[RMDB]
Record summary: An RNA of 177 nucleotides, treated with DMS and 2A3 and read out base by base. For 2A3, 3,493 sequencing reads were counted. Reactivities are given for positions 27 through 126. For DMS the reverse transcriptase was MarathonRT. It was measured as part of the RMDB libraries RFM100 and RFMREP. Conditions: 150 mM KOAc, 10 mM MgCl2 and 150 mM bicine (pH 8.5), 24 C. Reactivities are rounded to 0.1 and cut off at 0 and 3.
RNA sequence: GGGAACGACUCGAGUAGAGUCGAAAACGCCAGUUUUCGGGAAUAACCGCGGGCAACCAGAAAACCGCCCACGCCGCCCAGCACGGCCCCGCUUAAUGCGGCAAGGUCAGAUCCAAACAGCAUCUGAGUUAGUACUGACUUUCGAGUCAGUACUAACAAAAGAAACAACAACAACAAC
Reactivity to DMS in 0.01 (KOAc 150mM, MgCl2 10mM, bicine 150mM(pH8.5), 24C), signal-to-noise 3, nucleotides 027 to 126: c170g020c020c060a090g050u000u000u000u000c040g000g000g000a200a040u040a070a150c060c030g000c130g010g010g020c050a100a060c060c060a070g000a080a020a060a040c090c090g030c050c010c050a070c130g000c060c040g000c040c030c060a120g020c110a090c050g040g000c030c030c000c020g040c020u010u050a060a030u050g000c010g000g000c240a050a090g010g000u010c050a160g000a080u010c030c020a120a050a030c160a050g020c130a050u020c000u000g000a300
Reactivity to 2A3 in 0.01 (KOAc 150mM, MgCl2 10mM, bicine 150mM(pH8.5), 24C), signal-to-noise 4, nucleotides 027 to 126: c050g030c020c000a030g020u020u000u050u140c060g000g000g050a070a100u110a120a030c010c010g010c030g010g020g000c020a030a040c010c010a020g110a020a110a010a020c020c030g010c000c000c000a020c060g020c020c000g020c010c030c010a000g020c010a000c040g020g000c010c010c010c000g040c010u110u190a160a040u260g010c010g000g020c040a070a040g030g020u000c010a020g000a040u040c030c030a030a080a110c040a050g080c030a040u000c000u020g010a030